[RMDB]
RNA sequence: GGGAACGACUCGAGUAGAGUCGAAAAAUGGCCGCCCCCAGCCAGCGGAAGGCCGUCCUAUCGACGCUCGUGGGUAGGUAUGGCCGUCGGACGAAGCUGUAUGAAGCAGCUCACUCUGACGUCCGUGUAUAACUCUGCCGUUCGCGGCAGAGUUAUAAAAAGAAACAACAACAACAAC
Reactivity to DMS in 0.01 (KOAc 150mM, MgCl2 10mM, bicine 150mM(pH8.5), 24C), signal-to-noise 1, nucleotides 027 to 126: a120u000g010g020c080c030g000c070c000c000c020c060a300g000c020c020a170g000c030g000g000a140a300g000g000c010c020g020u000c010c040u020a000u010c010g000a010c070g000c220u000c300g000u000g000g000g000u000a000g000g030u010a000u010g000g060c000c000g030u000c000g070g000a010c060g010a210a180g000c000u000g010u000a090u000g040a170a250g000c000a010g010c000u000c100a130c300u000c000u000g010a080c020g000u000c010c000g020u000g000
The record gives the reactivity of an RNA of 177 nucleotides to DMS. For DMS the reverse transcriptase was MarathonRT. Conditions: 150 mM KOAc, 10 mM MgCl2 and 150 mM bicine (pH 8.5), 24 C. For DMS, 540 sequencing reads were counted. Reactivities are rounded to 0.1 and cut off at 0 and 3. Values cover nucleotides 27 to 126.